The record gives the reactivity of an RNA of 177 nucleotides to 2A3. Values cover nucleotides 27 to 126. The reactions ran in a buffer of 150 mM KOAc, 10 mM MgCl2 and 150 mM bicine (pH 8.5), at 24 C. It was measured as part of the RMDB library OK1LIB.
[RMDB]
RNA sequence: GGGAACGACUCGAGUAGAGUCGAAAAACGAUUAUUCAUUAUCUUGAGACCCCGCCCUCACAUGAGGAGCUGGUAAAACUCAUUGCCGAUAUGGGGAUGACAGUACGUGCACUGCUGCGUAAGAACGGGAGGAGCAAAGUUUCGACUUUGCUCCUCCAAAAGAAACAACAACAACAAC
Reactivity to 2A3 in 0.01 (KOAc 150mM, MgCl2 10mM, bicine 150mM(pH8.5), 24C), signal-to-noise 2, nucleotides 027 to 126: a000c050g100a190u090u100a060u130u110c120a040u050u200a060u100c000u120u120g050a070g050a180c020c000c000c030g030c000c000c000u030c050a270c300a300u300g000a010g000g000a100g000c110u150g020g000u060a000a000a000a220c000u010c000a040u000u120g000c000c000g020a050u000a180u260g050g000g000g000a050u080g090a000c000a000g000u110a070c000g030u110g000c060a010c020u070g060c040u100g040c060g170u090a070a070g010a140a000c000g010